An RNA of 177 nucleotides, treated with 2A3 and DMS and read out base by base.
The 2A3 profile rests on 793 reads.
For DMS the reverse transcriptase was MarathonRT.
It was measured as part of the RMDB library OK2TRN.
Conditions: 150 mM KOAc, 10 mM MgCl2 and 150 mM bicine (pH 8.5), 24 C.

RNA sequence: GGGAACGACUCGAGUAGAGUCGAAAAGAGAACAAGGACAAGAAGAAGAAAAUCAUUGUUACAGAUGGAGUAUUCUCAAUGGACGGUGACCUAGCUCCGCUUCCAGAGAUAGUCGAGCUCGCUGAGCCGCAUCUCCUCGAUUCGUCGAGGAGAUGCGAAAAGAAACAACAACAACAAC
Reactivity to 2A3 in 0.01 (KOAc 150mM, MgCl2 10mM, bicine 150mM(pH8.5), 24C), signal-to-noise 1, nucleotides 027 to 126: g030a010g030a050a000c050a100a090g060g020a050c030a030a040g010a070a040g080a090a020g080a040a090a020a040u110c030a030u040u130g030u120u050a090c100a040g050a020u040g000g020a000g140u080a100u100u060c000u000c000a000a140u000g030g000a050c010g030g000u020g000a110c040c060u080a070g040c000u030c010c000g000c080u060u000c000c030a070g000a010g000a070u050a040g050u060c010g020a010g030c010u010c050g170c070u180g000a000g050c060
Reactivity to DMS in 0.01 (KOAc 150mM, MgCl2 10mM, bicine 150mM(pH8.5), 24C), signal-to-noise 1, nucleotides 027 to 126: g010a110g000a100a080c090a070a050g020g010a100c080a060a080g030a090a060g000a080a090g000a100a070a090a070u000c020a050u000u000g000u000u010a120c080a100g000a030u000g000g000a050g020u000a150u000u000c030u000c000a080a130u010g020g010a070c010g000g000u010g000a060c130c080u000a090g000c050u000c000c010g010c110u000u010c030c040a060g010a110g000a050u000a120g050u000c090g020a080g000c010u000c000g000c100u010g000a070g000c100